This 207-nucleotide RNA was probed chemically with 2A3.
[RMDB]
RNA sequence: GGGAACGACUCGAGUAGAGUCGAAAAAACGUUGCAUGAUCGUAAAACAUGCCCGGCUUACCGUGAGCCGCCUUUGAAAGAAAGGUUUACACGGACUCUGUUGCGUUACGCACGUACCUAACUUGAGAAAACGGCAUCUUGUUCGCAAGAUGCCGAACACGUCUCUCUGGUUCGCCAGAGAGACGUGAAAAGAAACAACAACAACAAC
Reactivity to 2A3 in 0.01 (KOAc 150mM, MgCl2 10mM, bicine 150mM(pH8.5), 24C), signal-to-noise 2, nucleotides 027 to 156: a000a000c000g000u000u000g030c000a000u020g050a060u190c020g080u180a080a000a080a000c000a000u000g010c000c000c000g000g000c000u010u040a050c000c000g010u000g000a000g000c000c000g040c000c000u040u010u000g050a080a060a000g030a020a010a000g030g000u010u100u060a020c010a000c000g010g020a020c000u000c010u050g100u080u030g020c010g040u110u040a090c190g050c010a050c030g000u060a030c000c070u040a060a170c090u160u140g010a030g010a020a080a020a050c020g000g000c000a000u020c000u000u020g020u090u110c180g000c110a000a000g000a010u010g000c000c000g000a000a000

The 2A3 profile rests on 1,327 reads. Reactivities are given for positions 27 through 156. The reactions ran in a buffer of 150 mM KOAc, 10 mM MgCl2 and 150 mM bicine (pH 8.5), at 24 C.